[RMDB]
RNA sequence: GGGAACGACUCGAGUAGAGUCGAAAAGAUAUGGACAGUGUGCCAGCCUAAGUAGCAGGAACUACUGAAACCACUCGGAAACGAGUGGUCAGCCUGCUACUUAGGCGGUAAUUCACUGUCCUAAGUCGCCAGGAAUAAUGUUCGCAUUAUUCCUGGCAAAAGAAACAACAACAACAAC
Reactivity to 2A3 in 0.01 (KOAc 150mM, MgCl2 10mM, bicine 150mM(pH8.5), 24C), signal-to-noise 1, nucleotides 027 to 126: g060a070u170a090u190g010g010a010c030a000g000u010g000u070g060c060c050a090g000c050c000u050a020a000g040u010a000g000c040a010g000g040a080a100c110u250a030c020u300g060a220a130a140c000c010a000c010u000c000g030g000a030a130a040c020g000a020g000u030g040g000u000c000a000g010c000c000u030g000c000u010a000c000u000u000a000g000g000c000g000g010u000a000a000u190u000c040a000c010u000g000u000c000c000u000a000a000g040u010c120
Reactivity to DMS in 0.01 (KOAc 150mM, MgCl2 10mM, bicine 150mM(pH8.5), 24C), signal-to-noise 1, nucleotides 027 to 126: g010a050u010a300u010g010g030a030c000a000g030u000g000u000g000c020c030a130g000c000c010u000a000a010g000u000a000g040c000a000g010g000a150a040c070u030a300c010u000g000a030a080a070c020c000a010c000u010c000g000g000a150a080a230c000g000a020g060u000g020g010u010c000a010g000c000c000u030g020c050u000a000c010u000u000a000g010g000c010g030g020u000a010a090u000u020c010a010c000u000g010u000c000c000u000a000a110g020u000c100

Structure probing data (2A3 and DMS) for a 177-nucleotide construct. For 2A3 the reverse transcriptase was SuperScript II with manganese. It was measured as part of the RMDB library TTRINS. The reactions ran in a buffer of 150 mM KOAc, 10 mM MgCl2 and 150 mM bicine (pH 8.5), at 24 C.